[RMDB]
RNA sequence: GGGAACGACUCGAGUAGAGUCGAAAACAGCAAUCUCGCACUUGCACAAAUCCAUAUUGCACUGCAAUAUGGACUGGGCGGGAAUGCGAGCUGGGUUCGAAAUGUACCGUCGUACCCUUCGCAUACCCCUGCAACACGCUUUCGAGCGUGUUGCAGGAAAAGAAACAACAACAACAAC
Reactivity to 2A3 in 0.01 (KOAc 150mM, MgCl2 10mM, bicine 150mM(pH8.5), 24C), signal-to-noise 2, nucleotides 027 to 126: c040a010g090c060a080a120u050c000u000c060g000c000a070c030u010u020g000c020a040c000a040a140a050u000c000c020a020u020a000u020u000g010c110a120c300u300g000c030a000a000u000a000u000g000g060a000c000u000g000g000g020c040g000g010g000a090a030u040g000c000g030a020g010c020u020g000g030g000u000u020c000g020a010a050a070u210g050u180a040c000c020g000u000c000g020u060a070c040c000c000u050u080c100g030c000a040u040a160c020c000